[RMDB]
This 207-nucleotide RNA was probed chemically with 2A3. It was measured as part of the RMDB library OK3TST. High 2A3 reactivity points to a flexible backbone, as in loops and unpaired stretches. The RNA was probed in 150 mM KOAc, 10 mM MgCl2 and 150 mM bicine (pH 8.5) at 24 C.

RNA sequence: GGGAACGACUCGAGUAGAGUCGAAAACUACUGAGCUACUCGCCUGAUUCAUGGGUGGAUAAGGGGCCUGGCGGAAACAAAAUGGUUCAGGUUGGCGAAAUGGCUCGCUUCCCUGAUUGGGAAAAAUCGAAGAUUGACCUUCGCGGCCUGAAAUAGCGCUAUCCCAAGAAUUCGUUCUUGGGAUAGCAAAAGAAACAACAACAACAAC
Reactivity to 2A3 in 0.01 (KOAc 150mM, MgCl2 10mM, bicine 150mM(pH8.5), 24C), signal-to-noise 2, nucleotides 027 to 156: c020u130a010c010u140g000a010g080c020u030a020c050u090c010g000c020c020u140g070a160u090u100c150a230u260g020g020g010u210g000g000a030u060a110a080g000g030g000g000c010c040u000g030g000c020g100g010a080a110a000c020a060a030a060a060u090g060g030u040u010c000a000g000g160u000u090g300g000c000g020a000a030a050u120g020g000c030u020c020g040c000u020u050c020c000c030u050g110a240u160u300g010g000g000a000a150a000a000a000u120c030g010a020a010g050a100u120u300g040a080c000c000u000u020c030g000c000g020g050c000c030u020g010a030a020a030u080a000g060c030